Overview: Structure probing data (2A3 and DMS) for a 177-nucleotide construct. For DMS, 3,350 sequencing reads were counted. The RNA was probed in 150 mM KOAc, 10 mM MgCl2 and 150 mM bicine (pH 8.5) at 24 C.
RNA sequence: GGGAACGACUCGAGUAGAGUCGAAAAGAUAUGGAAAUCCGAGGCAACAGCCUGGUCGGAAACGACCAGGGACAUGCCUUUGAUUUCCUAAGUCAAAGGCGUAUGAUCCUUCGGGAUCAUACGCCAACCUCACACAUAAGUUCGCUUAUGUGUGAGGAAAAGAAACAACAACAACAAC
Reactivity to 2A3 in 0.01 (KOAc 150mM, MgCl2 10mM, bicine 150mM(pH8.5), 24C), signal-to-noise 3, nucleotides 027 to 126: g010a010u040a020u090g000g010a010a000a000u000c000c050g020a000g000g000c080a300a020c020a280g090c000c000u000g000g000u010c000g000g030a010a000a040c010g000a000c000c000a000g020g010g000a010c000a060u260g000c000c040u000u000u000g000a000u000u000u010c000c000u000a050a000g010u000c030a090a050a110g020g020c000g000u010a000u020g020a020u020c020c050u090u130c300g010g000g000a010u000c000a000u000a000c000g000c000c000a000a000
Reactivity to DMS in 0.01 (KOAc 150mM, MgCl2 10mM, bicine 150mM(pH8.5), 24C), signal-to-noise 4, nucleotides 027 to 126: g010a030u010a200u000g000g000a000a010a000u000c000c060g000a010g010g010c020a060a080c160a300g000c000c000u000g000g000u000c000g020g010a070a040a060c010g010a010c010c010a000g000g010g000a030c150a080u000g000c000c000u010u000u000g000a020u000u000u000c000c000u000a010a060g000u000c020a040a140a110g010g010c000g020u000a010u000g000a010u000c010c000u000u020c160g020g000g000a010u000c000a010u000a000c000g000c010c000a000a010